[RMDB]
RNA sequence: GGGAACGACUCGAGUAGAGUCGAAAACCCACAGUUCUCCGAUUCCAGUUUUCCCGUAAAGGAAUGUCCUUGGUGGCCGCUCAGGUGUUCGGUUCUUCCGCAGUACGUCGCAGCUUCGAGUCCUGUACCAGACCUCAGCAUUCGUGCUGAGGUCUGGAAAAGAAACAACAACAACAAC
Reactivity to 2A3 in 0.01 (KOAc 150mM, MgCl2 10mM, bicine 150mM(pH8.5), 24C), signal-to-noise 2, nucleotides 027 to 126: c010c000c010a000c000a040g000u000u040c030u000c030c010g050a100u080u000c020c000a010g010u030u030u090u030c040c030c020g060u090a080a050a050g080g040a060a070u090g080u040c000c000u050u060g000g040u050g110g040c020c000g000c010u030c040a000g040g020u000g040u050u030c000g010g000u020u080c040u080u060c000c000g030c010a000g030u030a020c020g040u020c000g040c010a010g040c030u050u040c010g000a000g020u010c010c010u040g030u030a030
The data come from the RNA Mapping Database (RMDB), library RFM100. This 177-nucleotide RNA was probed chemically with 2A3. 2A3 adducts were read by reverse transcription with SuperScript II with manganese. Reactivities are given for positions 27 through 126. The reactions ran in a buffer of 150 mM KOAc, 10 mM MgCl2 and 150 mM bicine (pH 8.5), at 24 C.